This 177-nucleotide RNA was probed chemically with DMS and 2A3. The 2A3 profile rests on 1,426 reads. The RNA was probed in 150 mM KOAc, 10 mM MgCl2 and 150 mM bicine (pH 8.5) at 24 C. Values cover nucleotides 27 to 126. For DMS the reverse transcriptase was MarathonRT. The data come from the RNA Mapping Database (RMDB), library M2PK50.

RNA sequence: GGGAACGACUCGAGUAGAGUCGAAAAGCUCUAUCCUUCGGGAUAGAGCAAACGCUACGAUUGACGGUGAAGCCGGUCCUGAGGUUCAGCAUAGUCGGGCUAAAAGUCACAUGUUCGCAUGUGACAACUCAUCGAUUGGUUUCGACCAAUCGAUGAGAAAAGAAACAACAACAACAAC
Reactivity to DMS in 0.01 (KOAc 150mM, MgCl2 10mM, bicine 150mM(pH8.5), 24C), signal-to-noise 1, nucleotides 027 to 126: g010c000u000c000u000a000u000c000c000u000u000c270g000g020g020a000u000a000g010a020g020c000a000a010a050c070g030c020u000a080c030g020a070u000u000g010a090c050g000g000u000g000a060a070g010c020c020g010g020u040c070c070u000g030a130g000g000u000u000c040a050g000c070a100u000a090g020u000c010g000g080g000c030u000a020a060a110a100g020u010c000a000c000a000u000g010u010u000c160g020c000a020u000g010u000g000a000c000a050a050
Reactivity to 2A3 in 0.01 (KOAc 150mM, MgCl2 10mM, bicine 150mM(pH8.5), 24C), signal-to-noise 1, nucleotides 027 to 126: g000c010u000c000u000a000u010c000c010u020u040c170g140g000g010a010u010a000g000a000g010c000a000a000a000c010g000c050u220a050c020g080a060u000u140g070a030c060g060g050u040g050a070a030g090c000c030g110g030u060c050c000u080g080a040g000g050u110u040c040a000g000c000a020u040a050g030u020c030g010g070g000c010u040a000a030a000a100g020u030c000a000c010a010u000g020u030u080c250g030c130a000u010g000u000g000a000c010a020a000